[RMDB]
RNA sequence: GGGAACGACUCGAGUAGAGUCGAAAAGGCGCGGCUAGGUCGACGGACCGAACAAUGGCAUCCCGCAUUCUGCCAUCCGCCGCGCAGCUUCUUCUCAAACGGUGCGGAAAAGUCGCGUUCGCGCGACACAAGGUGAUAAGUUCGCUUAUCACCUUGUAAAAGAAACAACAACAACAAC
Reactivity to DMS in 0.01 (KOAc 150mM, MgCl2 10mM, bicine 150mM(pH8.5), 24C), signal-to-noise 7, nucleotides 027 to 126: g020g010c010g010c010g010g000c010u000a040g010g020u000c020g010a200c300g010g000a020c010c000g010a120a010c300a260a010u000g000g010c000a050u010c110c000c000g010c020a020u000u000c050u010g000c000c010a010u000c060c050g000c000c000g010c010g010c010a020g000c090u000u000c140u000u000c020u000c030a100a070a100c170g010g010u000g010c010g010g000a190a050a080a110g020u000c000g010c000g010u010u010c180g020c020g020c000g000a010c010
Reactivity to 2A3 in 0.01 (KOAc 150mM, MgCl2 10mM, bicine 150mM(pH8.5), 24C), signal-to-noise 6, nucleotides 027 to 126: g090g000c000g000c000g010g010c010u010a010g000g010u010c030g060a220c210g180g020a010c000c000g010a010a000c010a010a020u010g000g000c010a030u130c030c010c010g000c000a020u300u100c020u030g000c000c000a010u010c010c020g000c000c000g000c000g000c000a000g000c000u100u060c000u050u010c020u020c000a040a050a040c050g020g000u010g000c000g000g000a020a080a020a030g000u000c000g000c000g020u040u070c190g000c000g000c000g070a000c000